Conditions: 150 mM KOAc, 10 mM MgCl2 and 150 mM bicine (pH 8.5), 24 C.
Chemical mapping of a 207-nucleotide RNA with 2A3 and DMS.
DMS adducts were read by reverse transcription with MarathonRT.
For 2A3 the reverse transcriptase was SuperScript II with manganese.
RNA sequence: GGGAACGACUCGAGUAGAGUCGAAAAAAACCUAAGGGGCAUGCCGAGGUGCAGUGACCUCGUUAAUCACGCUGCAACAUUAUAGUUGCCAACGACGACAACUACGCACUCGCUGCUUAAAACCCAGUAGGGUGCCGUCUGACUGAAGCCGUGCUUGACCUAUUAAGGCGUUCGCGCCUUAAUAGGUAAAAGAAACAACAACAACAAC
Reactivity to 2A3 in 0.01 (KOAc 150mM, MgCl2 10mM, bicine 150mM(pH8.5), 24C), signal-to-noise 2, nucleotides 027 to 156: a010a010a000c020c000u040a080a030g040g000g000g010c050a050u050g040c130c000g010a040g010g000u030g000c050a040g000u090g060a150c000c000u020c020g060u050u070a110a060u010c010a030c040g010c000u040g000c000a020a030c020a040u280u300a050u130a120g010u000u020g000c010c020a030a030c150g060a000c000g010a010c000a060a060c080u140a000c090g000c000a010c020u020c000g020c010u000g000c010u050u030a010a030a000a010c000c000c000a000g010u130a200g000g000g000u010g000c020c010g020u020c020u070g050a090c010u030g030a040a010g000c020c010g040u030g010c030u080u080g060
Reactivity to DMS in 0.01 (KOAc 150mM, MgCl2 10mM, bicine 150mM(pH8.5), 24C), signal-to-noise 1, nucleotides 027 to 156: a050a080a070c070c020u010a090a070g000g000g000g000c000a020u000g070c150c050g020a040g040g000u010g000c030a130g040u000g020a100c050c000u000c010g030u010u000a050a100u000c020a140c010g060c020u010g000c020a090a060c060a150u030u010a180u000a050g010u000u000g030c010c040a020a040c220g000a110c020g010a100c020a020a030c040u010a010c000g010c040a030c040u000c000g010c010u000g010c000u000u000a110a030a120a210c180c180c010a090g020u000a090g100g000g010u000g010c020c060g040u000c040u010g030a100c070u000g000a100a110g020c040c040g000u000g030c020u000u020g020
Source: RMDB library RSTRND, as collected in RNAgym.